The record gives the reactivity of an RNA of 177 nucleotides to 2A3 and DMS. Conditions: 150 mM KOAc, 10 mM MgCl2 and 150 mM bicine (pH 8.5), 24 C. Source: RMDB library TTRDEL, as collected in RNAgym. The DMS profile rests on 2,483 reads.
RNA sequence: GGGAACGACUCGAGUAGAGUCGAAAAGAUAUGGAGUCUAGCGCAAGGCGACAUGUCGGAAACGACAUGAUCGCUGAUGACCGCACAGACUCCUAAGUCAAAAGUGCUACACUUCGGUGUAGCACAAUCCUUUGGAAAACUUCGGUUUUCCAAAGGAAAAAGAAACAACAACAACAAC
Reactivity to 2A3 in 0.01 (KOAc 150mM, MgCl2 10mM, bicine 150mM(pH8.5), 24C), signal-to-noise 2, nucleotides 027 to 126: g000a000u040a000u050g000g010a010g000u000c030u040a050g010c010g000c030a120a260g050g000c000g000a010c000a000u020g020u000c000g000g010a030a020a000c020g020a000c000a010u030g060a260u020c000g000c020u000g000a010u010g010a010c030c000g000c020a140c060a190g020a000c000u000c000c000u000a010a000g020u000c030a060a030a090a130g010u000g000c000u000a000c000a010c010u050u160c300g190g020u000g000u000a010g000c010a010c000a000a000
Reactivity to DMS in 0.01 (KOAc 150mM, MgCl2 10mM, bicine 150mM(pH8.5), 24C), signal-to-noise 2, nucleotides 027 to 126: g000a000u000a030u010g000g010a030g020u000c000u000a060g000c010g010c010a040a030g010g030c000g010a020c000a010u000g000u010c000g000g000a010a010a030c000g000a020c000a000u000g010a070u000c010g010c000u000g000a030u030g010a020c300c000g000c010a070c300a070g000a010c000u000c000c000u000a000a040g010u000c000a090a100a120a140g010u000g000c000u000a000c010a000c000u010u020c160g010g000u000g010u000a000g000c010a000c000a020a040